[RMDB]
RNA sequence: GGGAACGACUCGAGUAGAGUCGAAAACUUUCCCACUCCCUUCGACGCUAGGGAGGUCUUCAUUUAAUUGAAACGCAGGAGCGGACCUUGAAUAGUUGUGUGAACCUUCUAUUCUCAUCGGAAACGAGGUAGGAUUUAGGUUCGCCUAAAUCCUACCAAAAGAAACAACAACAACAAC
Reactivity to DMS in 0.01 (KOAc 150mM, MgCl2 10mM, bicine 150mM(pH8.5), 24C), signal-to-noise 3, nucleotides 027 to 126: c150u010u000u000c000c000c000a300c060u010c020c000c010u000u020c110g040a220c160g000c070u010a040g000g000g000a010g000g000u000c060u000u000c060a030u000u010u040a150a270u020u020g000a030a070a120c110g040c070a070g000g010a070g000c000g000g000a030c100c040u000u000g000a060a040u000a020g010u000u010g020u030g010u020g000a050a140c120c000u000u000c010u000a020u000u000c000u000c050a060u020c110g030g000a050a040a120c070g020a090
Reactivity to 2A3 in 0.01 (KOAc 150mM, MgCl2 10mM, bicine 150mM(pH8.5), 24C), signal-to-noise 6, nucleotides 027 to 126: c010u040u020u030c000c000c000a010c000u010c000c000c000u040u060c080g180a140c050g050c090u030a000g000g000g000a010g010g010u020c020u090u040c010a210u070u130u200a230a240u080u120g060a040a030a050c040g010c070a100g030g080a060g030c020g000g040a100c020c030u070u100g010a030a010u030a030g030u020u000g040u030g090u090g130a030a040c000c000u000u000c000u010a030u000u010c050u010c040a150u130c070g050g030a080a060a030c070g030a060

The record gives the reactivity of an RNA of 177 nucleotides to DMS and 2A3.
DMS adducts were read by reverse transcription with MarathonRT.
Conditions: 150 mM KOAc, 10 mM MgCl2 and 150 mM bicine (pH 8.5), 24 C.
Reactivities are given for positions 27 through 126.
The data come from the RNA Mapping Database (RMDB), libraries RFM100 and RFMREP.